[RMDB]
RNA sequence: GGGAACGACUCGAGUAGAGUCGAAAACGCGAUGGAUACGUCCAUCGCGAAUCCGUCCAAGCCGCGGACGUUAAACUGUGGCACGGUUGUGCCUAGGUGCAACCCUGCUCGGAAUGGCGGCACCCCUGCCCAAGCUACCGUCUACGGACGGUAGCAAACGGGUAGGGUAUUUCGAUACCCUACCCGUAAAAGAAACAACAACAACAAC
Reactivity to 2A3 in 0.01 (KOAc 150mM, MgCl2 10mM, bicine 150mM(pH8.5), 24C), signal-to-noise 2, nucleotides 027 to 156: c010g000c000g000a010u010g030g010a000u030a030c290g100u010c000c010a000u020c000g010c000g000a000a000u040c020c000g010u000c000c010a030a040g000c010c000g000c000g000g000a000c020g000u010u030a000a030a040c000u020g020u270g050g000c010a000c010g040g000u020u020g020u000g030c030c030u070a200g020g170u020g010c000a010a010c000c000c020u010g000c010u010c020g030g030a200a200u100g100g010c000g000g000c000a080c000c000c020c000u050g040c030c030c000a050a010g000c000u000a000c010c000g000u000c010u030a020c170g100g010a000c000g010g000u000a000g000c000a000a000